Conditions: 150 mM KOAc, 10 mM MgCl2 and 150 mM bicine (pH 8.5), 24 C. An RNA of 177 nucleotides, treated with DMS and 2A3 and read out base by base. DMS adducts were read by reverse transcription with MarathonRT. For DMS, 4,161 sequencing reads were counted.

RNA sequence: GGGAACGACUCGAGUAGAGUCGAAAAUGUCGCAAGGCGCAGGAGUUGGGCACCCUCGACGAGGACGCGGCGCGUUGGAUGCGCCGGCAUGGAGGUCCUUAAAUGAACGCACCCAAGCUGGUCAUUGGACCCUACGUUAUUUCGAUAACGUAGGGUCAAAAGAAACAACAACAACAAC
Reactivity to DMS in 0.01 (KOAc 150mM, MgCl2 10mM, bicine 150mM(pH8.5), 24C), signal-to-noise 2, nucleotides 027 to 126: u010g010u010c030g000c100a050a130g000g000c040g000c090a030g010g000a070g000u010u040g010g000g060c030a060c030c040c020u000c030g000a080c080g000a070g000g010a060c000g000c140g000g000c010g010c050g020u030u020g060g010a120u060g000c000g000c000c010g000g000c010a050u000g020g000a100g020g000u020c030c000u010u000a040a040a060u010g000a060a110c140g020c030a080c020c000c040a070a110g010c010u040g000g000u000c060a120u020u030g000
Reactivity to 2A3 in 0.01 (KOAc 150mM, MgCl2 10mM, bicine 150mM(pH8.5), 24C), signal-to-noise 3, nucleotides 027 to 126: u120g030u020c020g000c070a050a100g030g000c000g000c040a010g000g080a050g010u080u030g020g010g000c010a050c000c030c010u030c000g150a110c080g050a040g030g010a030c020g000c000g070g020c000g000c000g040u050u180g150g050a100u170g010c000g000c040c010g010g040c020a030u110g140g000a050g030g010u030c000c000u030u040a060a180a000u090g010a030a030c010g000c030a090c010c000c000a000a040g030c100u140g020g010u010c020a050u030u070g040